[RMDB]
RNA sequence: GGGAACGACUCGAGUAGAGUCGAAAAUAAGAGCAUGUACGAAUCACGAUAUGAGAGUUCCUGGUGAAUCCCGGGUACAAGGAAUGGUAUUAAUCUCCCACUGCGUUCCCUUGCAGUAGGGAUAUAAAUCACUGAACAUGUUCGCAUGUUCAGUGAUAAAAGAAACAACAACAACAAC
Reactivity to 2A3 in 0.01 (KOAc 150mM, MgCl2 10mM, bicine 150mM(pH8.5), 24C), signal-to-noise 2, nucleotides 027 to 126: u190a060a040g040a030g030c060a030u070g040u040a050c070g060a130a070u050c050a020c120g070a050u060a060u300g080a040g010a020g070u000u040c000c010u030g020g000u050g020a050a020u030c030c000c030g030g000g010u020a030c010a010a020g060g030a080a050u120g060g040u070a050u120u120a100a090u020c020u010c050c000c000a010c010u000g010c000g070u050u020c020c010c000u000u050g000c010a010g010u100a140g000g000g010a000u000a000u000a010a070
Reactivity to DMS in 0.01 (KOAc 150mM, MgCl2 10mM, bicine 150mM(pH8.5), 24C), signal-to-noise 3, nucleotides 027 to 126: u000a050a050g000a090g010c090a030u000g000u000a070c070g020a110a080u010c050a060c050g030a110u020a100u000g010a120g000a180g010u000u000c020c010u000g010g020u010g000a100a160u010c090c000c030g010g000g000u010a030c040a120a050g000g010a030a020u010g010g010u000a040u010u010a050a070u000c110u000c000c000c000a030c010u000g000c000g000u010u000c030c040c020u000u010g010c010a030g000u000a040g010g000g030a020u000a020u000a040a100